[RMDB]
RNA sequence: GGGAACGACUCGAGUAGAGUCGAAAAUUGUAGCAAUUGUGAAUGGGAGUUCACUCAUGAUUUGGCUCUCUGUUUGUCUGUUAUUGGUGUAUAGGAAUGCUUGUGAUUUUUGCACAUUGAUUUUGUAUCCUGAGACUUUGCUGAAGCUGCUUAUCAGUCACCCUAUAAAGUUCGCUUUAUAGGGUGAAAAAGAAACAACAACAACAAC
Reactivity to 2A3 in 0.01 (KOAc 150mM, MgCl2 10mM, bicine 150mM(pH8.5), 24C), signal-to-noise 5, nucleotides 027 to 156: u070u030g030u030a020g010c030a050a130u060u080g020u030g080a080a080u080g030g040g020a050g020u120u110c030a020c060u080c050a090u060g080a090u050u020u080g020g000c010u020c010u000c020u040g060u040u100u020g030u000c030u030g060u100u080a090u070u080g030g020u030g010u030a060u070a060g090g030a050a040u020g020c010u040u040g000u010g050a090u030u070u090u170u170g030c020a020c010a040u020u080g030a040u030u060u030u110g040u040a060u060c010c020u040g000a030g020a050c010u090u070u060g000c010u030g010a020a020g010c010u030g000c020u100u100a060u110c020a010g080
Reactivity to DMS in 0.01 (KOAc 150mM, MgCl2 10mM, bicine 150mM(pH8.5), 24C), signal-to-noise 5, nucleotides 027 to 156: u000u010g010u000a110g030c030a060a060u000u010g020u000g010a060a050u000g020g010g010a150g030u010u000c020a050c030u000c050a080u000g010a160u010u010u000g020g010c030u010c030u010c030u010g010u010u000u000g020u000c040u000g030u000u010a080u000u000g020g020u000g020u000a060u000a090g020g010a070a050u000g010c050u000u000g030u000g010a120u000u000u010u010u010g020c030a050c040a100u000u010g000a140u000u000u000u000g010u000a100u000c010c020u000g000a150g000a090c060u000u000u000g020c020u010g000a050a300g020c010u000g010c010u000u000a090u000c040a160g010
Source: RMDB library OK3TST, as collected in RNAgym. The record gives the reactivity of an RNA of 207 nucleotides to 2A3 and DMS. The DMS profile rests on 16,450 reads. The 2A3 profile rests on 2,981 reads. For DMS the reverse transcriptase was MarathonRT.